[RMDB]
RNA sequence: GGGAACGACUCGAGUAGAGUCGAAAACACGGCGGUUCGCCGCCGUGAAAAAACCUUUGUGUAGUGAACUGAACUACAGCUGCGAAGGGAGACCCAUUGGGUCUCCUGGAGCUGCAGUCACUACACUCUGGUAAAAAACCGUGCUUCGGCACGGUAAUCCGAGUAUAAGUUUCGACUUAUACUCGGAAAAAGAAACAACAACAACAAC
Reactivity to 2A3 in 0.01 (KOAc 150mM, MgCl2 10mM, bicine 150mM(pH8.5), 24C), signal-to-noise 1, nucleotides 027 to 156: c000a020c000g000g070c010g030g120u140u160c280g050c090c020g010c000c020g010u000g000a040a000a000a000a020a000c010c010u000u020u040g000u010g000u000a010g000u000g050a150a050c000u030g020a140a010c110u230a280c220a010g040c010u280g160c040g000a030a040g000g000g000a000g000a000c000c040c130a120u250u300g040g000g000u000c000u020c030c000u010g040g000a000g020c000u000g030c010a000g000u000c000a000c000u010a010c000a000c000u000c000u000g020g000u020a000a000a000a190a060a000c000c000g000u000g000c000u020u080c150g190g010c000a020c000g010g030u070a030a030